Chemical mapping of a 177-nucleotide RNA with DMS. Reactivities are given for positions 27 through 126. The data come from the RNA Mapping Database (RMDB), library OK2TRN.
[RMDB]
RNA sequence: GGGAACGACUCGAGUAGAGUCGAAAAAAGGCCACCCUUGGCAGAAGCACUGAUAAGAUCGUGAGCCAAGUUCACAUCAAUAUAAUGGCAAAGGACUGUUCCAAUAAGUGUUUGUGGGAAAAAUUAGACGGUUAUUGUACUUCGGUACAAUAACCGUAAAAGAAACAACAACAACAAC
Reactivity to DMS in 0.01 (KOAc 150mM, MgCl2 10mM, bicine 150mM(pH8.5), 24C), signal-to-noise 1, nucleotides 027 to 126: a040a000g010g000c120c000a090c020c090c060u000u000g030g040c100a080g010a200a120g030c090a040c060u000g040a070u000a080a150g010a270u000c140g070u000g000a150g010c060c050a020a060g020u000u000c050a000c040a020u020c090a050a070u000a110u010a020a070u000g010g040c130a040a060a150g000g010a060c100u020g020u000u010c040c040a080a050u000a080a010g010u000g000u010u000u010g050u030g000g030g000a040a090a060a090a130u000u030a140g010